[RMDB]
RNA sequence: GGGAACGACUCGAGUAGAGUCGAAAAAUAGUUAAGGUUGCGCUUGCCUAUUUAGGCAUACUUCUCAGGAUGGCGCGUUGGAGUCCAACAAGAUCCAGGGACUGUACAGAAUUUUCCUAUACCUCGAAAAACAUUCGCUUGUUCGCAAGCGAAUGAACCCUUAACAAGGGUUCGCCCUUGUUAAGGGAAAAGAAACAACAACAACAAC
Reactivity to 2A3 in 0.01 (KOAc 150mM, MgCl2 10mM, bicine 150mM(pH8.5), 24C), signal-to-noise 2, nucleotides 027 to 156: a010u130a070g060u070u060a060a020g030g070u060u040g010c010g000c010u040u030g010c000c000u100a240u150u170u200a000g000g000c000a000u020a020c040u060u110c040u060c070a030g050g000a080u050g000g100c060g020c070g000u000u050g000g030a070g070u020c050c000a040a030c010a130a050g030a130u040c020c010a000g030g010g000a010c050u060g050u050a060c010a040g080a170a140u060u000u030u100c000c000u040a070u060a140c010c010u060c080g020a040a000a010a060a050c000a000u010u000c010g020c000u030u000g000u010u000c060g020c210a010a000g000c000g000a000a010u010g000a010a020
Reactivity to DMS in 0.01 (KOAc 150mM, MgCl2 10mM, bicine 150mM(pH8.5), 24C), signal-to-noise 2, nucleotides 027 to 156: a170u000a130g010u000u000a040a070g020g000u010u000g030c090g010c110u000u020g020c000c010u000a230u000u000u000a040g010g040c030a080u000a050c040u000u000c010u000c050a160g030g000a110u000g010g020c090g020c040g020u000u010g000g000a120g000u000c020c000a050a110c100a140a260g020a110u000c040c040a100g000g010g020a030c120u000g030u000a190c050a160g020a120a140u000u000u000u000c010c010u000a100u010a060c040c010u000c020g020a050a020a090a080a160c010a020u000u000c010g040c000u000u000g010u000u000c230g040c030a020a050g000c000g000a020a000u000g000a040a090
An RNA of 207 nucleotides, treated with 2A3 and DMS and read out base by base. Reactivities are given for positions 27 through 156. The reactions ran in a buffer of 150 mM KOAc, 10 mM MgCl2 and 150 mM bicine (pH 8.5), at 24 C. The 2A3 profile rests on 1,188 reads. For DMS the reverse transcriptase was MarathonRT. Source: RMDB library M2RFPK, as collected in RNAgym.